An RNA of 177 nucleotides, treated with 2A3 and DMS and read out base by base.

RNA sequence: GGGAACGACUCGAGUAGAGUCGAAAACAGGCCGCCCGCUCGACCGCCGAGGACGUCGAACUCGCGCUCGACGCCGCGCACCGGGCCGCGCCCGCCUGGGGCCGCACCAGCGUGACCGAACGCAGCACUUUGCUUUCUAGUUCGCUAGAAAGCAAAGAAAAGAAACAACAACAACAAC
Reactivity to 2A3 in 0.01 (KOAc 150mM, MgCl2 10mM, bicine 150mM(pH8.5), 24C), signal-to-noise 1, nucleotides 027 to 126: c000a010g020g050c030c030g000c030c040c010g000c050u040c010g080a090c000c040g000c000c010g020a080g020g070a110c020g050u060c030g010a050a070c030u000c070g060c010g040c040u000c000g020a030c020g040c020c010g020c010g000c040a040c030c020g000g030g000c000c020g020c020g000c010c000c000g020c000c010u040g000g000g030g040c010c020g000c010a030c000c040a020g020c020g020u040g000a060c020c040g010a060a030c030g000c070a040g040c000a040
Reactivity to DMS in 0.01 (KOAc 150mM, MgCl2 10mM, bicine 150mM(pH8.5), 24C), signal-to-noise 3, nucleotides 027 to 126: c110a080g020g000c010c040g000c040c030c110g030c030u020c020g010a090c120c060g010c050c050g010a070g000g010a080c000g020u010c040g010a040a060c050u000c210g020c100g000c050u000c010g010a050c060g010c020c020g020c060g010c070a070c110c030g010g010g000c040c050g000c090g010c030c030c050g010c030c020u020g000g020g000g010c020c050g010c050a080c060c060a090g010c030g010u020g030a090c080c020g000a060a080c060g010c050a080g010c110a170
For DMS the reverse transcriptase was MarathonRT. Conditions: 150 mM KOAc, 10 mM MgCl2 and 150 mM bicine (pH 8.5), 24 C. For 2A3 the reverse transcriptase was SuperScript II with manganese. As a SHAPE reagent, 2A3 marks flexible, mostly unpaired nucleotides at the ribose 2'-OH. The data come from the RNA Mapping Database (RMDB), library OK2TRN.